RNA sequence: GGGAACGACUCGAGUAGAGUCGAAAAGUCGCGGAGCAGUUUUUCCGGGUGGUGGUAGCUGUUGGUUCUUGGCUGUCCGUGGUCGAGGUGCGGCGGUGGGAGCCAUUCGGUAUCGCCGUGAGCGUUCGCCCGGCUAAAAUUUCGAUUUUAGCCGGGCAAAAGAAACAACAACAACAAC
Reactivity to 2A3 in 0.01 (KOAc 150mM, MgCl2 10mM, bicine 150mM(pH8.5), 24C), signal-to-noise 2, nucleotides 027 to 126: g010u000c030g010c000g030g030a030g050c080a110g090u030u040u070u160u000c010c000g040g040g010u040g000g040u040g060g080u100a050g030c010u000g020u050u020g060g000u010u040c040u040u050g040g000c000u010g080u050c060c080g080u120g030g060u110c060g010a090g000g060u150g060c040g000g000c000g000g000u030g020g050g040a080g000c000c020a030u060u030c000g020g010u020a020u160c050g000c000c000g000u020g000a010g050c070g020u040u090c060

Description: The record gives the reactivity of an RNA of 177 nucleotides to 2A3. The 2A3 profile rests on 1,175 reads. The reactions ran in a buffer of 150 mM KOAc, 10 mM MgCl2 and 150 mM bicine (pH 8.5), at 24 C. Source: RMDB library OK1LIB, as collected in RNAgym.